[RMDB]
RNA sequence: GGGAACGACUCGAGUAGAGUCGAAAACCUCCAAACUUCGGUUUGGAGGAAAAGGAGCCAAAAUAAGAACGGUAAGGGAAGACGGAACCCAAGUCUAUAAAAAAAGUACCAUGUUCGCAUGGUACAAGUUCAAUUUAGGGUUCGCCCUAAAUUGAACAAAAGAAACAACAACAACAAC
Reactivity to DMS in 0.01 (KOAc 150mM, MgCl2 10mM, bicine 150mM(pH8.5), 24C), signal-to-noise 2, nucleotides 027 to 126: c000c000u000c000c000a010a000a020c000u000u000c190g030g000u000u000u000g010g000a010g040g000a000a020a040a060g000g000a130g040c000c020a020a050a090a130u000a080a080g000a100a080c150g040g000u010a030a090g000g000g000a060a100g020a050c110g000g000a070a120c060c050c030a060a080g000u000c030u010a130u020a010a010a060a060a020a110a120g000u000a000c000c010a010u000g000u000u000c180g020c000a010u000g000g020u000a000c010a010a060
Reactivity to 2A3 in 0.01 (KOAc 150mM, MgCl2 10mM, bicine 150mM(pH8.5), 24C), signal-to-noise 2, nucleotides 027 to 126: c000c000u030c010c000a010a010a010c000u020u080c180g080g010u010u000u000g000g000a040g020g000a020a010a000a020g060g020a030g030c020c020a040a020a000a100u220a090a050g090a110a020c050g020g040u080a050a030g070g000g010a000a040g040a050c050g020g030a040a050c000c000c020a010a020g030u000c070u050a170u300a060a190a010a000a000a000a000g000u000a000c000c000a010u020g020u020u050c240g000c100a000u020g040g000u000a000c010a000a010